[RMDB]
RNA sequence: GGGAACGACUCGAGUAGAGUCGAAAAGGCUGGUUAUCACCAAAUUGCUAUUGUUGAAUACUGCACAUGCCUUCUUUAUUCUGAGAUCAAACAACACAGAUUAAAUAUGCAUGGGGCCAACUUGGUGCAUCAGGGUUGCCAUCUUGUGGAACAUUAAUAAGACUAUAUUUUUCGAAAUAUAGUCUUAAAAAGAAACAACAACAACAAC
Reactivity to DMS in 0.01 (KOAc 150mM, MgCl2 10mM, bicine 150mM(pH8.5), 24C), signal-to-noise 4, nucleotides 027 to 156: g050g030c050u000g030g010u000u000a100u010c060a110c040c010a080a100a080u000u000g020c030u000a060u000u000g000u000u010g010a110a140u010a100c060u000g020c000a060c040a030u000g000c020c040u000u000c120u000u000u000a010u020u000c020u000g000a090g000a170u000c070a170a100a150c070a130a100c030a110c000a040g000a060u000u000a010a020a050u000a070u000g010c010a040u000g010g010g030g000c030c060a020a050c030u000u000g010g030u000g010c170a060u000c040a110g010g010g010u000u000g000c020c020a060u000c060u010u010g020u000g030g010a090a110c060a110u000u000a050a250
Reactivity to 2A3 in 0.01 (KOAc 150mM, MgCl2 10mM, bicine 150mM(pH8.5), 24C), signal-to-noise 3, nucleotides 027 to 156: g040g000c040u020g010g010u110u170a050u220c030a030c100c030a050a090a130u110u120g020c050u110a040u150u110g040u050u050g050a130a060u140a200c090u100g040c040a000c000a030u010g000c000c000u050u080c030u000u070u030a050u050u020c020u020g040a050g020a210u160c130a170a210a140c040a080a040c050a040c010a050g000a020u000u090a020a010a010u080a050u080g010c010a000u000g000g040g080g000c050c010a010a020c050u010u030g040g060u070g050c000a010u030c020a040g000g050g030u020u020g000c000c000a020u010c030u040u100g000u060g050g060a080a010c010a060u050u100a080a070